[RMDB]
RNA sequence: GGGAACGACUCGAGUAGAGUCGAAAAGAUCGGGACCGCCAGCACCACCUUGUCCGCACCGUGCGCCCGGGCGACCUGGCACGCCGCCUUGGCCGUCGCUCCGGUGGCGAUGCCGUCAUCGACGAUCUGGCCGCUCUAAUUUCGAUUAGAGCGGCCAAAAAGAAACAACAACAACAAC
Reactivity to DMS in 0.01 (KOAc 150mM, MgCl2 10mM, bicine 150mM(pH8.5), 24C), signal-to-noise 1, nucleotides 027 to 126: g030a080u000c040g010g010g010a120c060c090g040c050c030a080g030c070a080c040c030a080c110c060u000u010g000u010c020c020g000c020a060c060c100g000u000g010c080g020c040c020c040g000g010g010c030g010a070c060c070u000g000g020c040a100c070g050c030c030g000c020c040u020u000g020g010c060c100g010u010c070g020c040u000c010c140g000g030u000g000g020c010g000a070u000g010c050c060g020u000c040a120u010c040g010a120c110g010a090u010c090